[RMDB]
RNA sequence: GGGAACGACUCGAGUAGAGUCGAAAACAAGAAGGCGGAGUCUGAUGAAGCAAGACUCGGCUGAUACAAUCCUCCUAGAGAAAGGGGUCAGAGAGAGCAGCCCUGCCUGGAGCACUGCACAGGGCUGUCACUCUUGACUAUUCGUAGUCAAGAGUGAAAAAGAAACAACAACAACAAC
Reactivity to DMS in 0.01 (KOAc 150mM, MgCl2 10mM, bicine 150mM(pH8.5), 24C), signal-to-noise 9, nucleotides 027 to 126: c120a110a110g010a130a200g010g010c010g010g000a020g010u000c000u000g010a170u030g010a140a110g020c130a170a020g000a010c000u000c000g000g020c010u000g010a120u020a080c190a090a090u020c050c010u000c020c030u000a080g010a120g010a060a090a070g000g010g010g010u010c070a050g000a080g010a090g010a110g010c000a010g000c000c000c000u000g000c120c050u000g000g000a100g010c100a070c080u010g010c100a110c020a010g000g000g010c000u000g000
Reactivity to 2A3 in 0.01 (KOAc 150mM, MgCl2 10mM, bicine 150mM(pH8.5), 24C), signal-to-noise 9, nucleotides 027 to 126: c040a020a040g130a060a040g040g010c070g060g010a000g010u000c010u030g080a140u190g130a190a040g120c090a060a010g020a010c000u010c020g050g000c010u010g010a010u050a140c060a040a060u050c000c010u040c000c020u100a070g010a010g050a170a110a050g020g010g020g010u040c070a010g040a020g010a010g000a000g110c010a000g000c000c000c000u010g020c010c030u050g040g030a080g030c080a030c150u120g000c050a020c020a040g000g000g000c000u000g000

The data come from the RNA Mapping Database (RMDB), libraries RFM100 and RFMREP. Structure probing data (DMS and 2A3) for a 177-nucleotide construct. For 2A3 the reverse transcriptase was SuperScript II with manganese. The reactions ran in a buffer of 150 mM KOAc, 10 mM MgCl2 and 150 mM bicine (pH 8.5), at 24 C. DMS adducts were read by reverse transcription with MarathonRT.